[RMDB]
Chemical mapping of a 177-nucleotide RNA with 2A3 and DMS. 2A3 is a SHAPE reagent: it acylates the 2'-hydroxyl of flexible nucleotides of all four kinds. The 2A3 profile rests on 4,343 reads. Reactivities are rounded to 0.1 and cut off at 0 and 3. The RNA was probed in 150 mM KOAc, 10 mM MgCl2 and 150 mM bicine (pH 8.5) at 24 C. 2A3 adducts were read by reverse transcription with SuperScript II with manganese. Reactivities are given for positions 27 through 126.
RNA sequence: GGGAACGACUCGAGUAGAGUCGAAAAGAUAUGGAAGUUCAGCGACUUUUGACGGAGCUCGGAAACGAGGCUCCGAUAAGUCGGACUUCCUAAGUCAAACCUGGCUCUAGUUCGCUAGAGCCAGGAAUCUAGUUACCUUGUUCGCAAGGUAACUAGAAAAAGAAACAACAACAACAAC
Reactivity to 2A3 in 0.01 (KOAc 150mM, MgCl2 10mM, bicine 150mM(pH8.5), 24C), signal-to-noise 2, nucleotides 027 to 126: g010a000u010a000u060g010g010a000a020g000u030u020c050a110g180c150g280a020c020u020u110u300u120g020a020c000g010g000a010g010c010u000c020g000g010a030a000a000c000g010a020g120g160c010u020c000c000g000a010u020a020a000g000u000c000g000g000a000c000u000u010c000c000u000a020a000g010u000c030a080a010a140c010c000u010g000g000c000u010c010u010a030g050u090u040c210g050c190u000a000g010a000g000c020c000a000g000g000a000a010
Reactivity to DMS in 0.01 (KOAc 150mM, MgCl2 10mM, bicine 150mM(pH8.5), 24C), signal-to-noise 3, nucleotides 027 to 126: g000a020u000a050u020g000g000a020a010g000u000u000c090a300g010c180g000a010c010u000u000u010u020g010a300c020g000g000a010g010c000u000c000g020g010a010a030a040c010g010a030g000g020c000u000c000c000g010a010u000a010a010g030u000c000g010g000a000c000u000u000c010c000u000a000a060g000u010c010a130a140a200c010c000u000g000g000c000u000c000u000a000g000u000u020c210g020c000u000a010g000a010g010c010c000a000g010g010a020a010